RNA sequence: GGGAACGACUCGAGUAGAGUCGAAAACUUUGGAGCCGCAAGUCUCAAAAGGAUGAGACCUUUAAAGAUUGUGAGCGUAGACGUGGGGGUGAGGCACCUCGCCUACUGUGUGAUAAAUGGCGACGGGCGUCUCUAGAGAGUUCGCUCUCUAGAGACGAAAAGAAACAACAACAACAAC
Reactivity to 2A3 in 0.01 (KOAc 150mM, MgCl2 10mM, bicine 150mM(pH8.5), 24C), signal-to-noise 1, nucleotides 027 to 126: c030u170u040u070g040g090a010g020c010c000g060c120a020a080g140u000c010u000c010a040a130a010a020g080g000a020u140g050a030g070a150c010c000u040u110u140a070a060a000g020a020u020u060g020u030g060a200g000c060g020u050a050g010a030c060g020u070g000g000g000g020g000u030g000a030g000g010c030a060c030c010u000c010g070c000c010u060a080c060u050g090u010g060u030g080a110u100a200a250a110u120g030g000c000g000a010c050g000g000g090
Reactivity to DMS in 0.01 (KOAc 150mM, MgCl2 10mM, bicine 150mM(pH8.5), 24C), signal-to-noise 2, nucleotides 027 to 126: c060u000u000u010g010g020a300g020c040c040g010c100a110a050g010u000c020u000c070a080a090a070a020g020g000a160u000g020a200g010a170c020c010u010u000u020a060a130a050g000a030u000u000g010u000g010a080g000c050g010u010a080g000a050c070g020u010g000g020g000g010g000u000g020a030g000g030c060a060c060c040u000c060g000c020c000u010a090c120u000g010u010g000u020g000a070u020a050a100a070u000g010g000c000g010a050c140g010g000g010